[RMDB]
RNA sequence: GGGAACGACUCGAGUAGAGUCGAAAAUAAUAUGCAUAUCGAGUUCCCAUGUAUUUUCGUAGCCCUGCGCCUGUAACAUUACAGCUUAGUAAGAAUGCUACCUAACGAUAGCUAGCCGCAGGAUUAAGCAACAUAGACGUUUCGACGUCUAUGUUGCAAAAGAAACAACAACAACAAC
Reactivity to DMS in 0.01 (KOAc 150mM, MgCl2 10mM, bicine 150mM(pH8.5), 24C), signal-to-noise 1, nucleotides 027 to 126: u030a100a020u000a140u010g000c090a120u000a120u000c030g010a180g000u010u000c000c000c000a140u000g000u000a040u000u000u010u000c030g030u000a170g020c090c000c000u000g010c010g030c020c030u000g000u000a100a190c220a190u030u000a030c020a050g030c060u000u000a160g020u010a110a050g000a070a030u020g000c010u000a010c030c010u000a030a170c250g030a020u000a000g000c010u000a080g000c140c010g000c050a000g000g010a110u000u000a070a110